[RMDB]
RNA sequence: GGGAACGACUCGAGUAGAGUCGAAAAGCCGCGGCAAGUGGAGUUAGCGAGAAGAGACUAGGAUUUGGUUUCUUCAAGUGAAGCGGUCACCAAUCAGGUGUGGUAGUUACCGUAAAAAAUCCGGAUUAAUGCCUCAGCGCGUUCGCGCGCUGAGGAAGAUUGUAGUCAACUUCGGUUGACUACAAUCAAAAGAAACAACAACAACAAC
Reactivity to 2A3 in 0.01 (KOAc 150mM, MgCl2 10mM, bicine 150mM(pH8.5), 24C), signal-to-noise 1, nucleotides 027 to 156: g000c000c000g030c000g070g000c140a110a040g060u070g030g050a100g040u220u170a020g060c010g000a030g000a040a000g020a000g000a010c020u050a080g080g070a210u150u180u200g010g000u020u000u000c000u010u000c000a010a010g000u000g060a030a020g010c000g010g050u000c030a010c000c000a040a120u170c120a080g100g000u020g000u080g110g000u020a060g030u060u050a100c030c020g060u110a170a060a000a000a000a110u050c080c060g000g000a040u140u140a120a050u220g040c010c020u000c000a020g000c010g000c000g000u040u120c150g000c000g000c020g020c140u020g000a010g000g000a000a020
Chemical mapping of a 207-nucleotide RNA with 2A3. Conditions: 150 mM KOAc, 10 mM MgCl2 and 150 mM bicine (pH 8.5), 24 C.